[RMDB]
RNA sequence: GGGAACGACUCGAGUAGAGUCGAAAACAAAUCAGAGUUAUCUUUUGUUGCCUCUCAGGGCAAAAUCAUUUUCCCUCUUGGGAUGAUCAAUGGUGUUGGGGAGACAGCUGUAGUCGAGCUAUUAAAACACAGACCGUUCACCUCAAUAGAUGAUGUCGACUCUUCCCUCAUUCGUGAGGGAAGAGUCAAAAGAAACAACAACAACAAC
Reactivity to 2A3 in 0.01 (KOAc 150mM, MgCl2 10mM, bicine 150mM(pH8.5), 24C), signal-to-noise 1, nucleotides 027 to 156: c020a010a010a060u210c040a010g030a020g100u050u140a280u110c060u000u110u120u080g070u060u000g020c020c000u090c020u030c120a110g020g000g080c070a010a010a010a010u030c070a080u190u050u050u000c000c020c000u060c030u110u110g020g000g070a060u050g070a040u080c010a070a090u000g000g000u050g040u020u120g040g000g050g000a100g030a070c040a000g000c060u000g000u060a060g040u040c020g030a030g080c040u030a090u130u160a190a020a000a000c040a000c010a000g070a060c020c020g060u110u030c040a080c030c000u030c020a000a040u070a080g020a020u100g000a000u080g160u260c030